RNA sequence: GGGAACGACUCGAGUAGAGUCGAAAAGACUGGCUCAUCUUCGACGAGAGGCGGGCGAUCCUGAGAACUCUUAUCUUCCUACUUAGAAGAGGAGUCUCCUGGACGCCCCCGCCCGUUCGAGAUGGGCCUCGUGCCGACGAGGAAUCCGCAGAUGGGAGCAUGCUGAUAUGUUCGCAUAUCAGCAUGCAAAAGAAACAACAACAACAAC
Reactivity to 2A3 in 0.01 (KOAc 150mM, MgCl2 10mM, bicine 150mM(pH8.5), 24C), signal-to-noise 2, nucleotides 027 to 156: g050a020c050u020g010g000c000u000c010a000u010c030u300u190c010g000a020c010g010a020g020a090g140g050c130g040g000g020c020g090a300u010c000c000u050g040a090g040a190a110c000u030c050u150u180a150u080c010u010u030c010c030u110a300c180u280u300a070g000a040a000g000a040g000g000a000g000u000c020u000c010c070u030g010g000a010c000g010c010c000c000c000c000g050c000c010c000g030u140u200c030g010a000g010a010u010g000g000g000c000c000u000c010g010u060g060c010c010g030a070c020g020a040g040g010a060a070u010c090c040g000c060a040g010a100u120g020g040g020a070

Structure probing data (2A3) for a 207-nucleotide construct. It was measured as part of the RMDB library VIROID. For 2A3 the reverse transcriptase was SuperScript II with manganese. For 2A3, 1,171 sequencing reads were counted.